[RMDB]
Description: Chemical mapping of a 177-nucleotide RNA with 2A3. The data come from the RNA Mapping Database (RMDB), library OK1LIB. For 2A3 the reverse transcriptase was SuperScript II with manganese. The reactions ran in a buffer of 150 mM KOAc, 10 mM MgCl2 and 150 mM bicine (pH 8.5), at 24 C.

RNA sequence: GGGAACGACUCGAGUAGAGUCGAAAAUUAAUUCUUUAGGUUUGUAUCCUCCUGAUUUAGAAUCCGAAUCAUUACUAGCGUUCUUUUGAUUAUCUAAAGAACUUGAGUUUCCACAUGCUGCUGCAAACUUCAUGCACGAGUUCGCUCGUGCAUGAAGAAAAGAAACAACAACAACAAC
Reactivity to 2A3 in 0.01 (KOAc 150mM, MgCl2 10mM, bicine 150mM(pH8.5), 24C), signal-to-noise 2, nucleotides 027 to 126: u040u010a020a030u050u130c070u020u120u090a060g030g040u110u000u190g190u140a130u040c000c000u000c000c000u030g030a100u000u060u110a130g060a170a110u000c030c010g050a010a090u010c020a070u100u220a110c050u110a090g030c000g080u010u030c020u070u070u060u000g130a130u010u190a030u200c000u020a000a000a000g000a000a000c010u050u090g010a030g010u030u010u050c030c000a080c000a060u250g000c010u020g000c020u010g030c000a000a120a000